[RMDB]
RNA sequence: GGGAACGACUCGAGUAGAGUCGAAAAAAAGUGUACGAAAGAACAAAGAAGCAAUCAAACGGAGUAGUGAAAUGAUGGCUUCAGUCCAAAAUGGGCAAACACUACAGACGGAGCCAAAGGCAAUUAACUUUUAAGACAGUUUCGACUGUCUUAAAAGAAAAGAAACAACAACAACAAC
Reactivity to 2A3 in 0.01 (KOAc 150mM, MgCl2 10mM, bicine 150mM(pH8.5), 24C), signal-to-noise 3, nucleotides 027 to 126: a000a000a020g060u040g010u030a020c020g070a090a060a060g030a090a010c040a070a120a050g080a030a020g010c040a010a050u060c040a090a070a040c080g020g060a040g050u070a010g030u040g070a050a100a140u080g030a010u020g030g010c000u020u050c040a030g010u030c010c000a040a180a040a190u110g020g010g000c000a040a070a000c020a010c030u040a020c040a000g090a010c050g020g020a020g030c010c030a060a030a000g050g000c010a030a010u080u030a100a110
Reactivity to DMS in 0.01 (KOAc 150mM, MgCl2 10mM, bicine 150mM(pH8.5), 24C), signal-to-noise 4, nucleotides 027 to 126: a040a050a060g010u000g010u000a060c060g000a090a030a070g000a100a060c090a060a050a070g010a040a050g020c020a050a050u000c040a050a080a090c190g000g000a080g030u000a030g010u000g000a060a090a070u010g000a070u000g000g010c020u000u000c020a090g020u000c020c030a010a070a060a110u010g000g000g000c070a070a050a120c040a010c030u000a030c100a080g010a090c050g000g000a080g010c020c010a030a060a080g000g000c100a040a060u000u010a070a110